An RNA of 207 nucleotides, treated with 2A3 and DMS and read out base by base. 2A3 adducts were read by reverse transcription with SuperScript II with manganese. Reactivities are given for positions 27 through 156. For DMS, 2,591 sequencing reads were counted. Source: RMDB library RNAMAK, as collected in RNAgym. The reactions ran in a buffer of 150 mM KOAc, 10 mM MgCl2 and 150 mM bicine (pH 8.5), at 24 C.

RNA sequence: GGGAACGACUCGAGUAGAGUCGAAAAACCUCCACGCUUCGGCGUGGAGGUAAAAAACCUUUGUGAGUGGACAUGUCUUAUGGCAUCCCAUUGGGAUGUCCAUUGGACAACAGCCACUCACUCUGGUAAAAAAUGGACGUGAUUCGUCACGUCCAAAGUAAUGUACGUUGUUCGCAACGUACAUUACAAAAGAAACAACAACAACAAC
Reactivity to 2A3 in 0.01 (KOAc 150mM, MgCl2 10mM, bicine 150mM(pH8.5), 24C), signal-to-noise 2, nucleotides 027 to 156: a010c010c000u020c000c000a030c010g000c030u060u120c280g070g000c020g000u020g000g010a000g000g000u010a000a000a030a000a010a000c010c000u010u030u000g020u000g000a010g000u010g000g030a090c070a200u070g010u010c000u000u020a020u010g010g000c000a000u010c000c000c090a300u090u300g020g000g010a000u010g070u120c010c000a020u000u000g000g000a000c000a020a010c020a010g040c010c000a000c000u000c000a000c000u000c000u000g000g000u030a120a080a010a000a020a080u110g000g000a000c000g000u000g000a020u050u070c160g040u010c140a000c000g000u000c000c000a000a010a000
Reactivity to DMS in 0.01 (KOAc 150mM, MgCl2 10mM, bicine 150mM(pH8.5), 24C), signal-to-noise 1, nucleotides 027 to 156: a040c010c000u010c000c000a070c000g090c010u010u000c200g020g050c020g060u010g010g000a010g000g030u010a010a030a120a130a030a020c000c000u010u000u000g010u000g010a050g010u010g010g010a050c060a300u000g020u000c000u010u010a050u010g010g040c010a010u000c000c000c010a300u000u000g030g020g000a020u000g000u000c000c000a040u000u000g010g000a060c010a030a040c060a140g040c000c000a010c000u000c010a000c000u020c070u000g010g040u000a000a020a050a050a090a110u000g020g030a030c000g060u010g020a070u010u000c300g040u000c010a020c010g030u000c000c000a000a000a100